[RMDB]
RNA sequence: GGGAACGACUCGAGUAGAGUCGAAAAUGAGACCGUCAAACUGCUGGGCUUGCGAUAAUAGAAUAGUAAAUAAUAGAUCAACAUCGGUGUGCGCCGCCUUGUUCCCGUUAACGAGAACGCACAACACCACCUAUGACCUCAGACGGGAGUAAUUGGGCUAUAGCCCAUGAUUCGUCAUGGGCUAUAGAAAAGAAACAACAACAACAAC
Reactivity to DMS in 0.01 (KOAc 150mM, MgCl2 10mM, bicine 150mM(pH8.5), 24C), signal-to-noise 1, nucleotides 027 to 156: u010g020a140g000a110c000c010g000u000c000a100a060a080c050u000g050c010u000g010g020g010c040u000u000g010c060g050a130u010a080a160u000a090g030a110a110u000a180g010u000a050a020a180u000a090a140u000a130g020a080u020c020a090a090c060a090u000c050g000g000u000g000u010g030c030g040c000c020g000c070c050u000u010g010u000u000c040c050c070g010u000u000a040a060c130g000a050g000a030a050c030g010c050a030c030a060a070c040a090c030c000a040c070c030u010a060u000g000a110c050c020u010c030a130g010a040c030g000g010g000a110g020u000a080a060u040u000g030g020g010
Reactivity to 2A3 in 0.01 (KOAc 150mM, MgCl2 10mM, bicine 150mM(pH8.5), 24C), signal-to-noise 3, nucleotides 027 to 156: u120g000a030g050a040c010c010g040u050c040a060a100a120c060u030g030c010u030g010g030g000c000u050u040g070c020g050a070u080a130a080u050a230g050a110a050u070a060g080u110a040a050a170u210a050a060u090a100g080a100u110c010a080a020c030a110u090c090g030g020u050g000u010g040c020g000c000c020g080c000c020u030u050g040u020u020c000c070c010g030u090u160a020a020c040g000a010g010a090a000c040g020c020a000c000a080a020c040a050c040c030a030c020c000u040a080u070g080a070c000c040u030c010a040g010a040c010g010g000g020a010g000u030a020a070u050u090g040g000g000

An RNA of 207 nucleotides, treated with DMS and 2A3 and read out base by base. The RNA was probed in 150 mM KOAc, 10 mM MgCl2 and 150 mM bicine (pH 8.5) at 24 C. The 2A3 profile rests on 1,238 reads. As a SHAPE reagent, 2A3 marks flexible, mostly unpaired nucleotides at the ribose 2'-OH. The data come from the RNA Mapping Database (RMDB), library OK3TST.